[RMDB]
RNA sequence: GGGAACGACUCGAGUAGAGUCGAAAAGACGCCUAAUGGCGAAAAUGUAAAGUCAACUACACACAAGAUAAAUACAAGUGCUAAAUGUCGUAACUAGUUGAUCUAGUCCAGCGGUGAGAUCCGCAGAAUCGGGUGAUAUCUUCGGAUAUCACCCGAUAAAAGAAACAACAACAACAAC
Reactivity to DMS in 0.01 (KOAc 150mM, MgCl2 10mM, bicine 150mM(pH8.5), 24C), signal-to-noise 2, nucleotides 027 to 126: g000a300c030g010c000c000u000a100a030u040g000g050c000g020a070a020a000a090u020g030u030a050a120a030g000u000c070a020a000c000u000a000c120a150c130a000c230a120a120g020a070u010a110a000a300u000a000c240a020a080g060u000g000c050u040a000a060a050u000g020u000c000g020u000a110a070c300u030a000g000u000u000g030a000u000c000u000a070g000u010c000c000a020g030c120g070g110u000g010a240g080a020u020c000c050g000c050a250g020a060
Reactivity to 2A3 in 0.01 (KOAc 150mM, MgCl2 10mM, bicine 150mM(pH8.5), 24C), signal-to-noise 2, nucleotides 027 to 126: g000a010c000g010c010c000u300a300a120u270g000g000c010g040a030a000a000a070u210g000u050a020a190a000g010u000c000a020a000c000u000a020c040a000c000a000c000a160a010g030a170u120a100a110a000u270a130c050a080a170g040u020g060c000u110a030a080a000u060g010u020c020g000u000a020a020c000u000a000g020u000u030g000a050u040c000u070a000g040u120c070c000a000g000c040g020g030u010g060a130g000a060u000c000c000g000c000a000g170a030
Conditions: 150 mM KOAc, 10 mM MgCl2 and 150 mM bicine (pH 8.5), 24 C. Chemical mapping of a 177-nucleotide RNA with DMS and 2A3. The DMS profile rests on 1,107 reads. For DMS the reverse transcriptase was MarathonRT. Source: RMDB library OK1LIB, as collected in RNAgym. For 2A3, 848 sequencing reads were counted. Reactivities are given for positions 27 through 126.